Conditions: 150 mM KOAc, 10 mM MgCl2 and 150 mM bicine (pH 8.5), 24 C. Chemical mapping of a 177-nucleotide RNA with DMS and 2A3. The 2A3 profile rests on 14,602 reads. The DMS profile rests on 11,540 reads.
RNA sequence: GGGAACGACUCGAGUAGAGUCGAAAAGUCAGUCAGCUCGGCCGGUGUAAAUAAACGAGCGACUGACAGAAAGAGCUCGACACCGGCUUUCUACCAAAAAGGUAGAGCAAAAGAAAAUGAGCUCAAACCCUAUAUAGUCAUUCGUGACUAUAUAGGGAAAAGAAACAACAACAACAAC
Reactivity to DMS in 0.01 (KOAc 150mM, MgCl2 10mM, bicine 150mM(pH8.5), 24C), signal-to-noise 5, nucleotides 027 to 126: g000u000c000a010g000u010c010a100g040c000u010c000g000g010c000c000g030g010u000g000u010a080a110a090u020a060a100a140c030g000a020g010c000g010a010c000u000g010a000c010a040g000a090a080a160g000a010g000c000u000c010g010a090c040a020c010c000g000g000c010u000u020u010c010u020a000c000c010a080a090a090a130a120g000g000u010a000g000a040g010c230a050a090a040a040g000a060a080a120a110u020g000a000g010c000u000c000a150a100a200
Reactivity to 2A3 in 0.01 (KOAc 150mM, MgCl2 10mM, bicine 150mM(pH8.5), 24C), signal-to-noise 7, nucleotides 027 to 126: g000u000c000a000g000u000c020a030g010c000u000c010g030g010c010c010g010g000u010g010u060a140a220a150u210a100a180a040c030g000a000g000c000g000a000c000u000g000a000c000a000g010a020a030a010g000a000g000c000u000c020g030a010c000a000c010c000g000g000c000u000u040u000c000u000a000c000c000a020a110a150a120a120g000g000u010a000g010a000g010c050a040a070a030a010g100a020a060a010a030u160g000a000g000c000u000c000a020a030a050